[RMDB]
Chemical mapping of a 177-nucleotide RNA with 2A3. Values cover nucleotides 27 to 126. Source: RMDB library OK1LIB, as collected in RNAgym. The 2A3 profile rests on 498 reads. 2A3 adducts were read by reverse transcription with SuperScript II with manganese. The RNA was probed in 150 mM KOAc, 10 mM MgCl2 and 150 mM bicine (pH 8.5) at 24 C.
RNA sequence: GGGAACGACUCGAGUAGAGUCGAAAAGAAGUCGCUGAGACGUGUGUCUUGCGGUGGCUUCGGAGCUGCGGCAUCCGCGUUUUCUUGGCUGCCUGUGUCCGCGCAUGCGUCCGAGUGGAGUCUCCUGCGAGGCACGGACUUUCGAGUCCGUGCCUCGAAAAGAAACAACAACAACAAC
Reactivity to 2A3 in 0.01 (KOAc 150mM, MgCl2 10mM, bicine 150mM(pH8.5), 24C), signal-to-noise 1, nucleotides 027 to 126: g070a020a050g020u050c010g030c060u130g000a000g050a150c010g050u040g110u120g020u000c060u110u250g090c080g090g000u050g000g010c000u010u090c100g040g000a070g000c040u010g000c000g120g000c010a110u080c090c030g120c060g000u000u000u230u000c110u160u120g050g000c010u030g010c110c000u010g010u000g050u080c000c090g000c010g000c020a030u080g000c090g020u000c000c010g000a000g040u050g020g050a040g030u000c170u010c160c000u000g040